[RMDB]
RNA sequence: GGGAACGACUCGAGUAGAGUCGAAAAUUCACUAAUUUAGGUAAGUUACGUUCCUACACCUAACCAAGAAGUGGCAAUGGGAGUGUAGUCUCAAAAUACGAUUAGAAGGAGAAUAUGAUUAAUACUGAGUGUCACCUUGAUUGGAUUGAAGGAUGCACUACACGGACGAAUUCGUUCGUCCGUGUAGAAAAGAAACAACAACAACAAC
Reactivity to DMS in 0.01 (KOAc 150mM, MgCl2 10mM, bicine 150mM(pH8.5), 24C), signal-to-noise 2, nucleotides 027 to 156: u000u000c020a140c060u000a090a090u000u000u010a090g020g040u000a030a050g000u010u010a050c050g000u010u000c020c010u000a110c090a050c050c030u000a050a140c070c010a090a150g000a100a090g070u000g000g010c000a070a170u000g020g020g010a070g060u010g000u000a040g040u000c010u000c010a090a140a090a160u000a090c000g000a090u000u000a100g000a180a100g010g010a080g000a050a090u000a110u000g010a180u000u010a050a090u000a100c030u040g020a170g020u010g030u000c030a040c030c010u000u020g000a070u000u010g030g010a110u000u010g060a120a110g010g020a060u000g020c050a170
Reactivity to 2A3 in 0.01 (KOAc 150mM, MgCl2 10mM, bicine 150mM(pH8.5), 24C), signal-to-noise 3, nucleotides 027 to 156: u030u000c010a030c070u060a080a130u060u110u090a020g010g030u060a050a160g020u040u080a020c060g010u040u040c020c000u020a020c000a010c010c010u040a080a060c020c020a060a060g110a110a040g100u030g020g000c010a030a040u030g060g010g000a060g020u020g010u020a050g020u010c010u000c050a080a110a040a040u180a060c020g070a080u060u130a100g090a090a020g140g040a050g050a100a030u120a090u140g060a060u130u120a090a050u120a150c030u010g060a020g060u030g040u020c010a010c000c030u030u080g010a090u080u040g060g010a030u020u080g050a010a020g010g050a040u070g080c080a020